[RMDB]
RNA sequence: GGGAACGACUCGAGUAGAGUCGAAAACACUGAGUCCAUCACUCCAAGGUCUGGACUCACUCCAGAGAUACCAUCUCCUGAAAGAGUACCUUGAGGAGGAAGUCGUGAAAGACCAAACAUCACGAUAUAACAUGCAGAAUUUCGAUUCUGCAUGUUAAAAAGAAACAACAACAACAAC
Reactivity to DMS in 0.01 (KOAc 150mM, MgCl2 10mM, bicine 150mM(pH8.5), 24C), signal-to-noise 7, nucleotides 027 to 126: c140a120c190u010g000a010g020u000c010c010a020u000c100a070c010u010c190c240a130a130g010g020u000c080u000g000g010a030c020u000c020a050c050u010c010c020a300g000a080g000a040u000a030c020c040a120u000c020u010c060c070u000g000a070a120a100g000a130g010u000a030c020c010u000u000g000a110g000g000a030g010g000a120a090g010u000c010g020u000g010a030a050a070g010a190c090c120a060a110a080c120a100u000c010a000c010g010a030u010a130
Reactivity to 2A3 in 0.01 (KOAc 150mM, MgCl2 10mM, bicine 150mM(pH8.5), 24C), signal-to-noise 5, nucleotides 027 to 126: c050a020c050u050g010a000g020u000c020c000a040u070c050a020c050u100c070c050a130a060g070g010u010c060u040g030g000a010c000u020c010a020c000u000c010c020a030g030a000g010a100u050a110c020c070a130u060c020u020c030c040u100g060a150a080a040g060a020g040u060a050c010c010u040u060g040a090g040g000a010g020g080a080a050g030u020c010g000u020g020a110a080a030g100a090c090c000a040a060a030c030a030u010c000a000c010g010a000u040a020

Background:
The record gives the reactivity of an RNA of 177 nucleotides to DMS and 2A3. The reactions ran in a buffer of 150 mM KOAc, 10 mM MgCl2 and 150 mM bicine (pH 8.5), at 24 C. Values cover nucleotides 27 to 126. The data come from the RNA Mapping Database (RMDB), library OK2TST. For 2A3 the reverse transcriptase was SuperScript II with manganese. The 2A3 profile rests on 6,894 reads.